[RMDB]
Notes
Conditions: 150 mM KOAc, 10 mM MgCl2 and 150 mM bicine (pH 8.5), 24 C. This 177-nucleotide RNA was probed chemically with DMS and 2A3. The DMS profile rests on 33,436 reads. DMS adducts were read by reverse transcription with MarathonRT.

RNA sequence: GGGAACGACUCGAGUAGAGUCGAAAAAGUAGGUAAGUCGGAGAGUUGAACUUUUGUUCCACUCGGAACAACUAAGUUUCCGGUCAUUGUAUCACCCGAUUUUAUAACAUAUCUAGCAUCGGUAGCGCGUAUAGUACAAGUUCGCUUGUACUAUACGAAAAGAAACAACAACAACAAC
Reactivity to DMS in 0.01 (KOAc 150mM, MgCl2 10mM, bicine 150mM(pH8.5), 24C), signal-to-noise 9, nucleotides 027 to 126: a080g010u010a050g010g010u010a030a080g000u000c020g000g000a120g000a070g010u020u030g010a030a020c030u000u010u000u010g000u000u000c000c030a150c230u040c240g020g010a040a020c030a030a030c300u030a020a050g010u000u000u010c040c040g010g010u010c040a130u020u020g010u010a040u010c040a270c090c000c010g000a030u010u010u010u020a070u010a070a080c130a090u030a070u020c070u000a050g000c100a040u010c030g000g010u010a050g000c150g000
Reactivity to 2A3 in 0.01 (KOAc 150mM, MgCl2 10mM, bicine 150mM(pH8.5), 24C), signal-to-noise 9, nucleotides 027 to 126: a000g140u130a040g050g080u080a060a060g030u040c030g050g020a070g010a030g120u050u140g030a020a010c020u030u070u140u260g020u010u000c020c010a080c100u130c110g000g010a010a000c010a010a010c050u130a050a040g030u010u060u000c020c000g010g030u050c060a120u070u230g060u120a060u060c020a050c020c010c000g000a000u030u060u070u080a160u060a100a060c080a050u140a040u090c070u080a030g050c030a040u070c070g110g020u070a030g040c050g000
Notes: 2A3 adducts were read by reverse transcription with SuperScript II with manganese. The data come from the RNA Mapping Database (RMDB), library OK1LIB. In probing experiments dimethyl sulfate is read out at A N1 and C N3, which are open when not base-paired.